[RMDB]
RNA sequence: GGGAACGACUCGAGUAGAGUCGAAAAGGUUUAUGCUGAACAGCGACCGAUUGCUGCAAUACUCUACAGUGAGCCUUAUCUUAAUCGCCUGCAACUGGCGUACACACAAGGUUACUCAAACUGGCGCGGAUUGAGUGAUUACUCCCGUCAGCAACUGCCGAGCAUAGGGAUUCGUCCCUAUGCUCGGAAAAGAAACAACAACAACAAC
Reactivity to 2A3 in 0.01 (KOAc 150mM, MgCl2 10mM, bicine 150mM(pH8.5), 24C), signal-to-noise 1, nucleotides 027 to 156: g000g030u110u000u210a070u180g010c010u000g110a040a020c010a070g010c000g030a020c000c100g010a050u000u110g060c070u070g080c000a010a050u020a090c000u040c080u100a080c040a060g010u030g120a030g000c000c010u030u260a110u060c010u090u110a170a060u130c060g000c010c010u060g090c080a260a130c170u130g000g000c000g040u130a100c180a000c000a000c030a080a060g080g000u030u010a050c010u010c080a060a190a000c020u000g010g000c070g000c100g050g020a030u040u120g080a050g030u100g000a160u050u120a030c060u000c070c000c000g000u000c000a000g000c000a090a130c080u090g030